[RMDB]
Chemical mapping of a 177-nucleotide RNA with DMS and 2A3.
The reactions ran in a buffer of 150 mM KOAc, 10 mM MgCl2 and 150 mM bicine (pH 8.5), at 24 C.
For 2A3, 225,567 sequencing reads were counted.
For DMS, 139,768 sequencing reads were counted.
RNA sequence: GGGAACGACUCGAGUAGAGUCGAAAAGGAUGCAACGUAGUAAUAUGUGUGACCGCUAGCUCAUGAGUUACACAUUACUAGUCGUAAUUCGAUUCAUGAGCUAGAUCGAGUUACGACAUCUGUAUCGCUACUAGAUACUAUUCGUAGUGUCUAGUAGAAAAGAAACAACAACAACAAC
Reactivity to DMS in 0.01 (KOAc 150mM, MgCl2 10mM, bicine 150mM(pH8.5), 24C), signal-to-noise 9, nucleotides 027 to 126: g010g000a020u000g010c030a070a130c300g010u000a020g010u000a050a060u010a050u010g020u000g010u000g010a040c070c090g010c050u000a050g000c040u000c030a020u000g000a070g000u000u000a050c090a030c110a030u000u000a010c010u000a130g010u000c110g010u000a010a010u000u000c060g000a010u000u000c040a040u000g000a030g010c040u000a040g000a020u000c020g000a060g010u000u000a010c010g000a060c010a040u000c100u000g020u000a030u000c040g000
Reactivity to 2A3 in 0.01 (KOAc 150mM, MgCl2 10mM, bicine 150mM(pH8.5), 24C), signal-to-noise 9, nucleotides 027 to 126: g030g000a010u010g000c010a030a040c080g060u050a060g020u020a040a090u050a080u150g020u000g010u010g020a040c000c030g000c080u040a020g020c010u020c050a020u070g030a020g070u020u050a020c040a000c000a020u010u010a010c020u040a040g080u050c030g000u000a000a010u020u030c030g010a010u040u020c030a030u040g040a010g020c030u030a020g000a010u030c010g000a010g040u000u000a000c010g020a010c010a010u010c030u030g010u010a020u010c010g000